[RMDB]
RNA sequence: GGGAACGACUCGAGUAGAGUCGAAAAUAAGCACCUCGUUAGGUGAGGCGGGUACACGAACAUAGGCCACUGACCCCGAACGUCGAGAGACGCCCCGGGUCAGGACAGCUCUUCCCGGCUUAAGGGUAAAAUCACAACGUCUUCGGACGUUGUGAAAGGUUACUAGUAGUUUCGACUACUAGUAACCAAAAGAAACAACAACAACAAC
Reactivity to 2A3 in 0.01 (KOAc 150mM, MgCl2 10mM, bicine 150mM(pH8.5), 24C), signal-to-noise 2, nucleotides 027 to 156: u150a040a040g060c000a020c000c010u060c050g080u090u280a080g000g040u060g030a060g010g000c010g020g010g030u130a040c080a020c120g070a150a000c050a150u180a100g000g080c020c010a080c020u000g000a010c000c010c010c050g030a060a010c000g000u000c020g020a030g000a000g010a090c000g030c000c010c030c040g000g000g000u020c010a000g000g010a020c020a040g000c000u020c010u080u010c000c000c000g010g030c040u060u140a040a060g050g010g030u070a080a120a010a080u020c000a000c000a010a000c000g010u000c000u020u020c130g110g000a000c000g000u000u000g000u000g000a000a000a000
Reactivity to DMS in 0.01 (KOAc 150mM, MgCl2 10mM, bicine 150mM(pH8.5), 24C), signal-to-noise 1, nucleotides 027 to 156: u010a050a200g010c050a070c000c000u000c070g040u000u000a110g050g000u000g000a010g020g040c000g040g000g010u000a050c050a140c100g030a070a130c090a120u000a110g030g000c030c030a120c000u000g000a030c010c000c010c050g010a040a030c000g040u010c010g030a300g000a300g000a030c010g000c010c020c090c170g000g020g000u000c010a000g000g000a120c080a050g000c020u000c040u010u000c020c030c000g000g000c010u010u000a090a130g000g000g000u000a050a070a110a140u000c000a010c010a020a010c000g010u000c010u010u000c300g020g010a010c010g010u000u020g020u000g020a010a000a110

An RNA of 207 nucleotides, treated with 2A3 and DMS and read out base by base. The data come from the RNA Mapping Database (RMDB), library M2RFPK. Reactivities are rounded to 0.1 and cut off at 0 and 3. For 2A3, 2,282 sequencing reads were counted. The RNA was probed in 150 mM KOAc, 10 mM MgCl2 and 150 mM bicine (pH 8.5) at 24 C.